[RMDB]
Notes:
This 177-nucleotide RNA was probed chemically with 2A3 and DMS. Conditions: 150 mM KOAc, 10 mM MgCl2 and 150 mM bicine (pH 8.5), 24 C. High DMS reactivity at an A or C suggests that its Watson-Crick edge is free. Values cover nucleotides 27 to 126. The data come from the RNA Mapping Database (RMDB), library TTRDEL. For 2A3, 2,290 sequencing reads were counted.
RNA sequence: GGGAACGACUCGAGUAGAGUCGAAAAGAUAUGGAGCUCGUAUUUCGCAAUGAUGUCGGAAACGAUUGAGCGAUUUACGAGGCUCCUAAGUCAAACGUCUUAUGGAUGUUCGCAUCCAUAAGACGAACCCUAUUCCGAUCUUCGGAUCGGAAUAGGGAAAAGAAACAACAACAACAAC
Reactivity to 2A3 in 0.01 (KOAc 150mM, MgCl2 10mM, bicine 150mM(pH8.5), 24C), signal-to-noise 1, nucleotides 027 to 126: g020a020u080a020u200g000g020a020g010c000u000c000g020u030a020u000u000u000c000g030c080a170a300u190g050a020u090g090u000c020g000g030a080a060a080c020g020a010u000u040g010a030g020c000g000a000u010u010u010a000c000g010a030g040g010c000u000c010c000u030a090a070g070u020c000a090a070a130c020g010u020c000u000u000a000u000g000g000a020u000g010u060u140c300g000c140a000u000c000c000a000u000a000a000g000a000c010g000a000a000
Reactivity to DMS in 0.01 (KOAc 150mM, MgCl2 10mM, bicine 150mM(pH8.5), 24C), signal-to-noise 2, nucleotides 027 to 126: g000a030u010a300u000g000g000a000g020c010u000c000g010u000a000u000u000u000c010g050c000a160a210u000g000a140u010g010u000c000g000g000a110a050a230c010g000a000u000u010g000a050g000c000g000a000u000u000u000a000c000g010a030g010g000c000u000c000c000u000a030a110g010u000c050a110a070a240c030g000u000c000u000u000a000u000g000g000a010u000g030u000u000c270g000c010a000u000c000c000a000u010a000a020g020a000c010g020a020a090